[RMDB]
RNA sequence: GGGAACGACUCGAGUAGAGUCGAAAAUGUGGUCUGGCCCCAAGCACUGUUUUGGUGAUGAGGGCAAGUACCUAUAGGGCAGUGUUUUGCACCUCUGAGAGUGGAGUGGCUCCCUUUGUGGGCUUGGUUUAACGCUACACUUCGGUGUAGCGUUAAAAAAAGAAACAACAACAACAAC
Reactivity to 2A3 in 0.01 (KOAc 150mM, MgCl2 10mM, bicine 150mM(pH8.5), 24C), signal-to-noise 4, nucleotides 027 to 126: u110g030u040g020g040u020c020u020g060g010c000c030c000c000a040a120g060c010a000c040u080g080u300u230u170u300g040g000u020g000a040u020g020a210g010g010g000c000a000a010g010u000a020c010c000u020a040u090a070g000g000g000c040a020g000u010g070u130u040u040u100g060c080a080c030c040u010c030u040g090a080g000a020g140u080g010g070a030g020u020g020g020c010u050c000c020c000u050u090u100g090u080g040g020g000c020u010u010g000g020
Reactivity to DMS in 0.01 (KOAc 150mM, MgCl2 10mM, bicine 150mM(pH8.5), 24C), signal-to-noise 3, nucleotides 027 to 126: u020g020u000g000g000u000c000u000g010g020c010c000c000c000a070a300g010c010a010c020u000g010u010u020u020u040g010g010u000g010a040u000g000a240g000g000g000c020a010a020g010u010a040c010c010u000a090u030a100g000g000g020c050a060g020u020g010u010u000u010u000g020c050a120c050c000u010c040u010g010a090g000a070g030u000g010g010a060g010u020g010g000c030u000c010c010c020u000u020u000g020u030g020g010g000c040u010u000g000g000

Chemical mapping of a 177-nucleotide RNA with 2A3 and DMS.